[RMDB]
This 170-nucleotide RNA was probed chemically with 2A3 and DMS.
Source: RMDB library 15KLIB, as collected in RNAgym.
Conditions: 150 mM KOAc, 10 mM MgCl2 and 150 mM bicine (pH 8.5), 24 C.
The DMS profile rests on 283,048 reads.
For 2A3, 121,639 sequencing reads were counted.
RNA sequence: GGGAACGACUCGAGUAGAGUCGAAAACCCGCGGGCCGGCUACUCUUCUUUCCCUUCUCUCGUCUUCCUCGGUCAACCUCCUGAGUUCCUCUUCUUCCUCCCUGCUGAGGUUCUUUCCUCCCGCGGACCACUAAGGUGUUCGCACCUUAGAAAAGAAACAACAACAACAAC
Reactivity to 2A3 in 0.01 (KOAc 150mM, MgCl2 10mM, bicine 150mM(pH8.5), 24C), signal-to-noise 9, nucleotides 027 to 129: c000c000c000g010c000g000g010g010c030c030g020g030c020u090a060c020u050c020u100u030c010u040u070u050c010c010c000u090u030c040u010c000u020c010g070u020c020u100u040c010c010u020c010g010g020u050c030a060a090c010c010u040c000c010u050g030a040g060u040u030c010c000u020c000u070u010c000u060u030c010c010u020c000c010c000u030g030c030u030g030a050g030g050u050u030c010u020u040u020c000c000u020c000c010c010g010c010g020g020a030c010c010a050
Reactivity to DMS in 0.01 (KOAc 150mM, MgCl2 10mM, bicine 150mM(pH8.5), 24C), signal-to-noise 9, nucleotides 027 to 129: c040c000c000g030c040g000g000g000c050c040g000g020c050u030a050c030u000c020u000u000c020u010u000u000c000c010c010u030u020c020u020c010u010c060g010u000c030u010u010c030c010u000c040g000g000u020c070a080a140c070c010u000c000c010u000g020a110g010u000u000c030c010u000c050u020u010c030u010u010c020c010u000c000c020c030u010g010c040u010g000a100g000g020u010u020c040u000u010u000c020c030u010c010c030c030g020c040g000g000a070c030c040a200